[RMDB]
The record gives the reactivity of an RNA of 207 nucleotides to 2A3 and DMS. The data come from the RNA Mapping Database (RMDB), library RNAMAK. Conditions: 150 mM KOAc, 10 mM MgCl2 and 150 mM bicine (pH 8.5), 24 C. For 2A3, 1,248 sequencing reads were counted. For DMS, 1,987 sequencing reads were counted.
RNA sequence: GGGAACGACUCGAGUAGAGUCGAAAACGCUGGGCCGAGAAACCGGGCGAGGUACUGAAGCGCGCACGGUACCGAUGAGCCUAGGUUUCGUUUGACGCCUGUGCUGAAGCGCGCACGGCAACCGAAAGGUGCGAUAAGGGCGGGUUCGCCCGCCCAAAUAACCCACUCUUUUCGAAGAGUGGGUUAUAAAAGAAACAACAACAACAAC
Reactivity to 2A3 in 0.01 (KOAc 150mM, MgCl2 10mM, bicine 150mM(pH8.5), 24C), signal-to-noise 2, nucleotides 027 to 156: c020g010c000u000g000g000g010c000c060g260a140g000a300a000a000c000c010g000g000g030c020g070a070g000g000u000a010c010u010g030a300a040g010c000g000c000g000c020a010c000g030g000u080a000c060c000g070a230u220g040a100g000c080c070u040a100g000g010u050u010u020c010g020u050u070u170g030a020c090g010c020c010u020g040u010g000c000u020g000a120a040g010c000g040c000g020c010a000c000g010g010c030a020a060c000c000g030a060a080a100g000g000u000g010c010g030a020u080a220a180g000g000g000c010g000g000g030u030u100c100g140c020c000c000g020c010c000c030a010a010
Reactivity to DMS in 0.01 (KOAc 150mM, MgCl2 10mM, bicine 150mM(pH8.5), 24C), signal-to-noise 1, nucleotides 027 to 156: c070g060c010u010g010g020g080c000c050g020a120g010a040a030a010c000c000g000g010g090c000g000a060g040g030u000a060c040u040g000a080a050g030c040g080c020g020c000a300c010g020g050u010a000c020c010g030a190u000g000a140g000c000c010u000a050g070g010u000u000u000c020g010u000u040u010g000a220c160g000c000c050u000g040u040g020c010u000g000a060a040g020c000g020c010g060c040a300c010g010g010c010a060a050c060c000g020a140a130a130g010g010u000g020c010g010a210u010a150a120g010g000g030c010g030g040g000u000u000c040g000c020c000c000g050c000c010c010a000a010